Conditions: 150 mM KOAc, 10 mM MgCl2 and 150 mM bicine (pH 8.5), 24 C. This 177-nucleotide RNA was probed chemically with DMS and 2A3.

RNA sequence: GGGAACGACUCGAGUAGAGUCGAAAAGAGCCGCAGUUCGCUGCGGCUCAAAAGCGUGGAAGCUCUGCCUGGAGUUGAAGCGUAAAAACUUAAUCAGGCAAAAAACGUGGGAGUUCGCUCCCACGAAGCAUACUUUAUGGUUCGCCAUAAAGUAUGCAAAAGAAACAACAACAACAAC
Reactivity to DMS in 0.01 (KOAc 150mM, MgCl2 10mM, bicine 150mM(pH8.5), 24C), signal-to-noise 2, nucleotides 027 to 126: g010a010g040c010c020g080c010a020g020u000u010c210g050c010u000g030c010g010g030c010u000c000a000a010a100a140g030c020g000u010g010g020a300a060g010c010u020c010u010g000c010c010u000g000g000a030g030u000u000g000a300a220g010c010g000u000a000a050a060a060a060c110u020u010a050a050u010c010a000g010g000c010a010a080a010a030a030a130c020g040u010g000g000g010a010g010u000u000c250g000c010u010c000c010c010a000c000g000a010a040
Reactivity to 2A3 in 0.01 (KOAc 150mM, MgCl2 10mM, bicine 150mM(pH8.5), 24C), signal-to-noise 2, nucleotides 027 to 126: g000a000g030c000c010g020c010a010g040u040u140c160g020c130u000g000c000g020g000c010u000c000a000a000a010a020g010c000g010u010g030g010a020a010g010c000u010c020u030g010c030c000u010g000g000a000g000u020u020g020a020a010g010c000g010u050a110a110a020a000a030c060u090u090a020a050u150c020a010g000g000c000a090a060a020a040a010a040c010g000u010g000g010g010a010g030u080u100c100g090c080u000c000c000c000a000c000g000a000a000